[RMDB]
RNA sequence: GGGAACGACUCGAGUAGAGUCGAAAAAGCAAGAGACACGAAACGUGUUCGAGAAACCCUUAGUGAGAGUAUAUCUGAUUACUCCGGCAUCUUCUCAAACUUUUCUGGAAUAUUUUCAGUUCAAGAAACGGAGGAGGAACUUCGGUUCCUCCUCCGUAAAAGAAACAACAACAACAAC
Reactivity to 2A3 in 0.01 (KOAc 150mM, MgCl2 10mM, bicine 150mM(pH8.5), 24C), signal-to-noise 1, nucleotides 027 to 126: a000g220c090a090a000g100a020g000a020c000a000c000g250a180a300a000c050g000u000g000u260u050c000g000a000g120a070a120a030c000c000c000u000u030a190g000u070g220a210g000a000g020u000a020u000a000u030c050u210g030a170u000u140a000c000u000c030c000g000g100c000a080u000c090u090u090c050u030c000a030a180a210c170u300u100u000u000c090u000g000g070a000a000u000a100u300u260u000u030c000a050g000u220u020c140a020a000g030a300a030
Record summary: An RNA of 177 nucleotides, treated with 2A3 and read out base by base. For 2A3 the reverse transcriptase was SuperScript II with manganese.